The record gives the reactivity of an RNA of 177 nucleotides to 2A3. For 2A3, 242 sequencing reads were counted. Values cover nucleotides 27 to 126. Conditions: 150 mM KOAc, 10 mM MgCl2 and 150 mM bicine (pH 8.5), 24 C.
[RMDB]
RNA sequence: GGGAACGACUCGAGUAGAGUCGAAAAGGGAAGACUGAAAAGAAGAACCAGUCGACUUUCUUCUUUAAUUGAGAAAUAGGUUUAUAGACCUAUAAGGACAUGCAUACAACUUAGAUCACUCAAGUUCGCCGACCACUGAUUUCGAUCAGUGGUCGGCAAAAGAAACAACAACAACAAC
Reactivity to 2A3 in 0.01 (KOAc 150mM, MgCl2 10mM, bicine 150mM(pH8.5), 24C), signal-to-noise 1, nucleotides 027 to 126: g000g000g000a000a120g000a000c070u070g140a020a020a000a000g300a050a000g000a020a020c110c000a040g230u000c000g050a090c000u090u180u000c000u000u020c000u030u060u270a170a240u000u160g090a050g060a040a070a000u000a000g000g000u000u220u260a300u000a020g090a000c000c000u000a020u040a300a000g300g000a000c130a070u250g040c090a300u300a160c000a000a000c050u020u020a040g000a140u070c000a020c000u190c000a120a120g060u200u220c000